[RMDB]
RNA sequence: GGGAACGACUCGAGUAGAGUCGAAAAGGGGUCUCGCAAUGAAGCGCGCCAGGGAGUCCAGGAGAGCUGAAGCCUCCACGGCUCUUAUUGGGACGACGAUCUGGCUGAAUGUCAAAGUGCGAGACGGAGGCACCCACAACGUCGCUUCGGCGACGAAACACUCUUUUGGGUUCGCCCAAAAGAGUGUAAAAGAAACAACAACAACAAC
Reactivity to 2A3 in 0.01 (KOAc 150mM, MgCl2 10mM, bicine 150mM(pH8.5), 24C), signal-to-noise 1, nucleotides 027 to 156: g140g020g020g020u010c000u000c000g000c000a000a110u120g030a230a220g020c020g000c020g000c060c000a000g000g000g000a020g000u010c000c000a030g110g020a010g000a000g010c000u000g010a050a000g010c010c000u000c000c000a020c000g000g050c030u000c020u030u050a300u150u120g080g000g030a030c010g010a120c010g010a020u030c000u010g040g060c120u150g040a160a050u270g090u140c020a020a030a130g030u000g000c000g000a000g010a000c000g010g010a000g000g020c010a020c000c000c000a010c000a050a050c010g000u030c000g000c030u000u220c240g080g010c010g020a000c000g000a000a010
Source information: An RNA of 207 nucleotides, treated with 2A3 and read out base by base. The RNA was probed in 150 mM KOAc, 10 mM MgCl2 and 150 mM bicine (pH 8.5) at 24 C. The data come from the RNA Mapping Database (RMDB), library RNAMAK. The 2A3 profile rests on 739 reads.